[RMDB]
RNA sequence: GGGAACGACUCGAGUAGAGUCGAAAAAACAAAGUUACAAGUAGGAUCAAAGCUAUUGUUAAUUUGAUUCUGAAUCUGAAUAACAGUAACUUAUCCAGGCUCGUCUGAUCUUGCAGAUAUGGCGAACAAAUUUGUCCUUUUUCGAAAGGACAAAUUUAAAAGAAACAACAACAACAAC
Reactivity to 2A3 in 0.01 (KOAc 150mM, MgCl2 10mM, bicine 150mM(pH8.5), 24C), signal-to-noise 3, nucleotides 027 to 126: a000a000c060a020a060a000g030u040u030a030c010a060a020g030u040a020g100g010a020u000c020a040a030a010g040c060u060a090u200u200g040u140u130a160a110u040u010u020g010a000u130u020c030u070g030a060a080u050c040u130g080a130a040u120a120a010c030a020g010u000a010a000c020u030u030a040u070c020c030a030g090g000c010u000c010g020u010c030u060g080a080u030c020u050u250g080c080a010g030a030u010a040u120g050g000c000g010a000a030c030
Reactivity to DMS in 0.01 (KOAc 150mM, MgCl2 10mM, bicine 150mM(pH8.5), 24C), signal-to-noise 5, nucleotides 027 to 126: a060a070c140a060a050a050g010u000u000a030c060a100a080g020u010a090g010g000a020u000c090a030a030a020g020c120u010a040u010u010g010u000u010a030a090u010u000u000g000a010u000u000c130u010g010a090a060u000c070u010g030a100a060u010a030a050c080a090g000u000a010a010c010u000u000a070u000c000c010a120g020g010c040u000c050g010u000c030u000g000a060u000c040u000u000g010c170a100g010a060u010a080u010g010g000c010g010a030a030c080